The record gives the reactivity of an RNA of 207 nucleotides to 2A3 and DMS. For DMS, 3,004 sequencing reads were counted. For 2A3 the reverse transcriptase was SuperScript II with manganese. For 2A3, 2,055 sequencing reads were counted.
[RMDB]
RNA sequence: GGGAACGACUCGAGUAGAGUCGAAAACAGACGCAAUCAAUGGGACCGAUAACGAAGUAGUUACCGUGACCGAUGAGAACACUGGUGAAAUCUCUGAGAAAGUCAAGCUGGGCACUAAGGCACUGGCUGGUCAAUGGCUGGCUUACGGUGUUACUCGUCAGUUAAGUCAGUUCGCUGACUUAACUGAAAAAGAAACAACAACAACAAC
Reactivity to 2A3 in 0.01 (KOAc 150mM, MgCl2 10mM, bicine 150mM(pH8.5), 24C), signal-to-noise 3, nucleotides 027 to 156: c050a030g070a050c050g030c090a000a130u100c030a080a060u170g000g020g040a050c020c020g040a050u020a050a010c070g060a170a060g070u160a020g010u100u040a020c000c030g000u010g110a040c020c040g030a040u110g010a000g010a020a020c030a020c050u050g000g050u030g070a000a100a110u090c100u010c010u050g040a050g030a130a040a000g040u070c080a060a020g010c010u060g030g030g020c040a050c130u160a100a080g050g000c050a040c180u070g110g000c020u040g010g030u090c050a050a080u060g020g020c000u010g010g010c000u030u030a020c020g000g000u000g010u010u010a060c040u030c010g010
Reactivity to DMS in 0.01 (KOAc 150mM, MgCl2 10mM, bicine 150mM(pH8.5), 24C), signal-to-noise 2, nucleotides 027 to 156: c020a150g000a100c080g080c060a080a190u000c040a110a130u000g000g010g010a190c170c040g010a030u000a040a050c000g050a120a120g030u000a110g000u020u000a040c040c010g000u020g000a300c020c020g000a070u000g000a040g000a110a050c030a100c010u000g060g000u000g000a100a070a130u000c020u000c010u000g020a170g000a060a100a100g030u000c050a040a080g040c030u010g010g000g030c030a080c060u010a060a100g000g000c060a140c040u000g000g020c020u010g040g000u010c110a000a070u000g000g020c000u000g010g030c040u020u020a060c070g020g020u000g020u000u000a050c020u000c020g000